Source: RMDB library M2PK90, as collected in RNAgym. Structure probing data (2A3 and DMS) for a 177-nucleotide construct.
RNA sequence: GGGAACGACUCGAGUAGAGUCGAAAAAAGCAUGUCUCUCUAUUGUCUCUCUAUUCAGAACUUAGUAUGGUGAUGGAUCGAUAGAGAGACAUUCCUGCAUCUGUCAUGCAUCACCAUAAAAACAAAAACUAGAUCGUAGGUUCGCCUACGAUCUAGUAAAAGAAACAACAACAACAAC
Reactivity to 2A3 in 0.01 (KOAc 150mM, MgCl2 10mM, bicine 150mM(pH8.5), 24C), signal-to-noise 2, nucleotides 027 to 126: a000a000g130c120a040u060g020u040c010u000c010u000c010u090a070u030u030g140u020c000u020c000u060c010u190a110u160u170c040a030g090a130a070c050u100u050a090g050u040a140u040g000g000u020g040a000u010g060g090a070u100c060g030a000u000a000g000a010g000a000g000a000c000a000u010u010c000c020u020g000c000a080u020c050u150g250u100c010a030u040g020c020a050u020c010a010c000c040a010u040a020a090a010a000a020c070a060a130a000a000
Reactivity to DMS in 0.01 (KOAc 150mM, MgCl2 10mM, bicine 150mM(pH8.5), 24C), signal-to-noise 1, nucleotides 027 to 126: a100a020g030c300a050u010g000u000c010u000c010u010c020u030a160u000u010g010u040c030u000c060u000c030u000a060u010u010c110a030g050a120a130c070u020u010a070g020u010a030u000g000g010u000g010a040u000g000g000a070u000c050g010a000u000a000g000a060g010a030g000a000c000a000u000u010c010c010u010g040c090a070u000c150u020g010u000c140a020u000g020c030a020u000c000a010c050c010a070u000a030a020a070a040a020c140a080a120a040a200